[RMDB]
RNA sequence: GGGAACGACUCGAGUAGAGUCGAAAACUGCUCACCGAUGAGCGGCUGCGCCCCUAUCAGCCCGGACACAUCCCCUUCAUCGAACCGACCGAGCGGCUCGGAUACCCGGUUGAUCCCGCGGUCAUCGCAACAGACCGAGAUUCGUCUCGGUCUGUUGAAAAGAAACAACAACAACAAC
Reactivity to DMS in 0.01 (KOAc 150mM, MgCl2 10mM, bicine 150mM(pH8.5), 24C), signal-to-noise 2, nucleotides 027 to 126: c040u000g010c030u000c030a130c120c110g060a110u000g010a030g040c060g030g010c050u000g030c140g020c010c010c030c070u010a090u000c040a100g020c010c070c040g000g020a090c070a030c100a130u000c020c000c010c080u000u000c040a040u000c090g010a060a090c070c050g010a050c050c040g000a060g000c000g020g030c040u000c030g020g010a100u000a060c040c010c030g010g010u000u000g000a130u000c090c000c000g000c110g020g000u000c110a050u000c050g000
The data come from the RNA Mapping Database (RMDB), library OK2TST. This 177-nucleotide RNA was probed chemically with DMS. The reactions ran in a buffer of 150 mM KOAc, 10 mM MgCl2 and 150 mM bicine (pH 8.5), at 24 C. DMS adducts were read by reverse transcription with MarathonRT.